[RMDB]
RNA sequence: GGGAACGACUCGAGUAGAGUCGAAAACGGGAGGCAGCAGUGGGGAAUUUUCCGCAAUGGGCGAAAGCCUGACGGAGCAAUGCCGCGUGGAGGUAGAAGGCCCACGGGUCGUGAACUUCUUUUCCCGACUAGACAGAACCUUCGGGUUCUGUCUAGUAAAAGAAACAACAACAACAAC
Reactivity to DMS in 0.01 (KOAc 150mM, MgCl2 10mM, bicine 150mM(pH8.5), 24C), signal-to-noise 3, nucleotides 027 to 126: c130g000g020g000a110g020g030c040a080g020c050a200g020u050g010g000g040g030a120a080u010u040u020u010c010c020g000c090a060a080u030g000g000g020c000g000a090a080a150g030c010c000u000g000a150c050g010g030a060g010c150a070a040u010g010c040c000g000c080g030u020g010g000a000g000g030u010a050g020a120a080g020g010c020c010c030a080c120g000g000g020u020c050g030u000g010a150a140c020u000u010c000u000u000u030u000c000c000c000g000
Reactivity to 2A3 in 0.01 (KOAc 150mM, MgCl2 10mM, bicine 150mM(pH8.5), 24C), signal-to-noise 3, nucleotides 027 to 126: c010g000g030g020a030g090g020c080a020g000c030a030g090u060g000g040g020g120a100a090u020u050u160u010c010c000g000c030a050a100u180g000g030g000c000g020a060a000a000g000c000c000u060g030a040c000g000g010a000g040c030a070a070u100g000c010c020g050c020g030u070g040g070a050g030g030u080a070g060a220a040g080g020c000c000c000a030c050g060g000g030u030c000g060u000g040a130a100c000u060u010c000u030u060u000u010c000c020c000g010
Background:
Chemical mapping of a 177-nucleotide RNA with DMS and 2A3. Conditions: 150 mM KOAc, 10 mM MgCl2 and 150 mM bicine (pH 8.5), 24 C. The 2A3 profile rests on 1,604 reads. It was measured as part of the RMDB library OK1LIB.